Chemical mapping of a 207-nucleotide RNA with 2A3 and DMS.
The data come from the RNA Mapping Database (RMDB), library ARCHII.

RNA sequence: GGGAACGACUCGAGUAGAGUCGAAAAGACAGGUCUUAUUAUUAGCGAGAUACGAUUAAGCCUUGUCUAGCGGCUUGAUAAGAGAUUGAUAGACUCGCAGUUUCUAGACUUGAGUUAUGUGUCGAGGGGUUGUUAAAAUAAUACAUAACCUAUGGUUAUUAUUAACGCAGUUCGCUGCGUUAAUAAUAAAAGAAACAACAACAACAAC
Reactivity to 2A3 in 0.01 (KOAc 150mM, MgCl2 10mM, bicine 150mM(pH8.5), 24C), signal-to-noise 3, nucleotides 027 to 156: g020a010c010a020g000g030u030c030u050u070a130u090u040a090u070u180a170g040c040g030a040g030a040u060a100c040g020a070u030u040a020a010g000c010c000u040u050g020u070c020u000a020g060c030g020g000c000u010u070g020a030u080a160a050g060a040g030a110u050u150g070a050u090a150g130a070c000u000c030g000c000a010g010u000u030u050c010u050a030g020a080c000u020u050g050a060g060u010u060a060u140g020u030g010u040c060g040a070g000g010g030g010u020u010g000u040u040a060a110a000a010u130a020a040u060a060c010a020u060a010a030c000c020u080a070u140g060g000u020u000
Reactivity to DMS in 0.01 (KOAc 150mM, MgCl2 10mM, bicine 150mM(pH8.5), 24C), signal-to-noise 2, nucleotides 027 to 156: g000a120c020a050g030g000u000c030u000u000a060u000u000a080u010u000a150g030c000g010a070g040a180u000a100c050g020a120u000u010a010a050g010c020c000u000u010g030u010c100u020a100g040c120g010g000c030u010u000g030a040u000a050a130g040a110g000a200u000u000g010a090u000a100g000a110c010u000c010g020c020a080g000u000u010u000c060u000a090g010a050c030u000u000g000a060g020u000u000a020u020g000u000g010u020c020g010a140g000g010g000g030u010u000g020u000u000a030a070a040a080u000a050a060u000a020c010a040u010a020a010c010c020u010a050u010g010g030u010u010